Annotation
The record gives the reactivity of an RNA of 207 nucleotides to DMS and 2A3. Values are in units of 0.01, from 0 to 300, in steps of 10. Source: RMDB library OK3TST, as collected in RNAgym. DMS adducts were read by reverse transcription with MarathonRT. For 2A3 the reverse transcriptase was SuperScript II with manganese. The reactions ran in a buffer of 150 mM KOAc, 10 mM MgCl2 and 150 mM bicine (pH 8.5), at 24 C.
RNA sequence: GGGAACGACUCGAGUAGAGUCGAAAAGGAGCGUCGUGCUUCCCCCUCUUAUCGACCAUACGAUUCACGCGGCGUGACUGGGUCAGCUCCAUCUGGUCCUCCAGGUGCUGGAUAUGGGUAUGGGAGACGCGAUGAUAUCCCGCGUGAACCCCUGGGGCAUCCUCUUUCUUUUCGAAGAAAGAGGAUGAAAAGAAACAACAACAACAAC
Reactivity to DMS in 0.01 (KOAc 150mM, MgCl2 10mM, bicine 150mM(pH8.5), 24C), signal-to-noise 1, nucleotides 027 to 156: g020g020a110g000c030g010u000c100g060u000g000c070u000u000c000c010c010c030c020u000c060u000u000a050u010c040g010a150c030c020a090u000a100c010g020a170u010u010c030a050c010g020c000g010g020c080g020u030g010a130c040u010g010g000g000u000c080a090g000c040u010c030c050a020u000c010u000g000g020u000c110c200u000c030c040a060g020g060u000g000c020u010g000g010a100u000a000u010g010g030g000u000a090u000g000g020g010a120g000a070c020g020c030g010a080u000g020a200u010a080u010c030c040c000g030c040g020u010g030a040a120c010c000c000c030u010g040g010g010g000
Reactivity to 2A3 in 0.01 (KOAc 150mM, MgCl2 10mM, bicine 150mM(pH8.5), 24C), signal-to-noise 3, nucleotides 027 to 156: g050g000a060g030c060g060u140c120g060u300g120c100u110u140c030c020c000c050c000u060c030u040u160a150u140c050g060a050c040c020a070u060a110c050g060a040u020u040c010a010c030g000c010g040g000c030g070u070g040a080c080u080g050g000g000u010c040a020g030c040u020c010c020a070u010c000u040g050g000u060c030c000u070c010c010a030g060g020u080g030c040u000g010g030a040u060a070u140g040g000g050u110a160u170g060g050g010a030g030a020c040g010c030g060a050u040g060a000u020a070u190c000c010c010g000c020g000u000g000a020a030c000c000c000c030u040g010g000g000g000